Chemical mapping of a 207-nucleotide RNA with 2A3 and DMS. For DMS the reverse transcriptase was MarathonRT. The 2A3 profile rests on 1,512 reads. In probing experiments dimethyl sulfate is read out at A N1 and C N3, which are open when not base-paired. 2A3 adducts were read by reverse transcription with SuperScript II with manganese.

[RMDB]
RNA sequence: GGGAACGACUCGAGUAGAGUCGAAAAAGGGGUUUGUGUCAAUGGACAAAAGUCAGUCCCUCUAGGUAGGGCCCCAAGGAGCAUCACCCAGGUUGAAGGGUGGUUUUCCUACUGCUGGGCCAGAAGUGCUGUCCUAUUGGCCUUCAUCUUCUCCAGCCUUCUUAUUCACCUUCGGGUGAAUAAGAAGAAAAGAAACAACAACAACAAC
Reactivity to 2A3 in 0.01 (KOAc 150mM, MgCl2 10mM, bicine 150mM(pH8.5), 24C), signal-to-noise 2, nucleotides 027 to 156: a000g070g020g000g000u090u090u060g130u070g030u060c020a020a050u120g000g010a010c040a040a210a000a060g130u150c060a030g070u070c000c020c000u010c030u050a070g020g060u060a020g020g040g000c000c000c030c000a010a030g020g000a000g000c010a000u000c000a000c000c000c020a020g170g110u110u150g130a130a130g000g000g000u010g000g000u000u000u010u020c010c000u040a140c050u050g040c040u030g010g000g000c000c030a010g030a040a020g050u140g010c040u010g010u070c000c010u100a160u050u130g030g000c030c000u000u030c050a130u040c030u110u020c040u000c040c000a020g000c030
Reactivity to DMS in 0.01 (KOAc 150mM, MgCl2 10mM, bicine 150mM(pH8.5), 24C), signal-to-noise 1, nucleotides 027 to 156: a080g010g040g050g000u000u000u020g040u000g020u000c010a030a080u000g010g000a030c040a030a030a070a090g000u020c070a110g020u000c060c000c010u010c070u000a090g030g000u000a120g000g020g000c050c030c000c040a110a090g010g020a010g020c140a020u000c010a010c000c020c000a260g050g020u000u000g010a200a180g010g020g040u000g000g010u000u010u000u000c010c000u010a060c160u000g040c070u000g040g010g040c040c040a080g000a040a100g010u020g020c050u010g000u000c020c030u010a170u010u010g020g020c040c000u000u000c030a130u010c070u020u010c040u010c030c080a070g010c090